[RMDB]
RNA sequence: GGGAACGACUCGAGUAGAGUCGAAAAAUGUAAUCUCACUCAUGGAGCGCGACAUGGAAGUAGUCUCCGACGAAAUCGACGGGAGCUCAGAAGUCGUGCCUAUAGUAGUAGUGGAUGAGGCGGAGGAGCUUGUUACGAUGGUGCUGGACGUGCUUCAGUCGUAUCAGGAUUUCGAUCCUGAUACGACAAAAGAAACAACAACAACAAC
Reactivity to 2A3 in 0.01 (KOAc 150mM, MgCl2 10mM, bicine 150mM(pH8.5), 24C), signal-to-noise 2, nucleotides 027 to 156: a010u180g010u090a060a040u000c000u060c020a010c030u120c020a060u040g030g020a160g060c030g000c000g000a000c030a090u250g110g080a100a000g040u230a000g040u110c000u000c010c000g030a050c030g130a040a180a230u200c030g060a030c030g020g020g050a030g010c030u020c040a050g050a160a000g050u020c000g010u000g000c000c010u060a080u030a040g120u000a000g010u000a000g030u030g100g000a020u050g010a040g000g000c110g010g010a020g030g000a000g000c080u080u060g010u050u040a050c050g040a070u100g010g050u040g050c050u000g000g050a000c020g020u030g000c030u050u020c020a040

Chemical mapping of a 207-nucleotide RNA with 2A3. It was measured as part of the RMDB library OK3TST. For 2A3, 848 sequencing reads were counted. For 2A3 the reverse transcriptase was SuperScript II with manganese. The reactions ran in a buffer of 150 mM KOAc, 10 mM MgCl2 and 150 mM bicine (pH 8.5), at 24 C.